[RMDB]
RNA sequence: GGGAACGACUCGAGUAGAGUCGAAAAGAUAUGGACCACUGGUGGAGCUGCUCUCGGAAACGAGAGGCAGCGUUGAAACCAUUGGUCCUAAGUCAAACAAUGUGUCGGGUUCGCCCGACACAUUGAAUCCUCAGAAUACCUUCGGGUAUUCUGAGGAAAAAGAAACAACAACAACAAC
Reactivity to DMS in 0.01 (KOAc 150mM, MgCl2 10mM, bicine 150mM(pH8.5), 24C), signal-to-noise 1, nucleotides 027 to 126: g010a020u000a250u010g000g000a030c010c010a000c170u000g000g030u000g000g010a200g080c000u000g010c010u000c010u010c010g020g000a050a040a100c000g000a010g010a060g010g000c000a010g020c010g000u000u020g030a220a300a050c010c000a000u000u000g000g000u000c000c000u020a000a070g000u000c010a190a140a230c000a000a010u000g010u010g010u000c000g000g000g000u030u010c200g010c000c000c000g040a000c020a000c000a000u010u000g000a150a160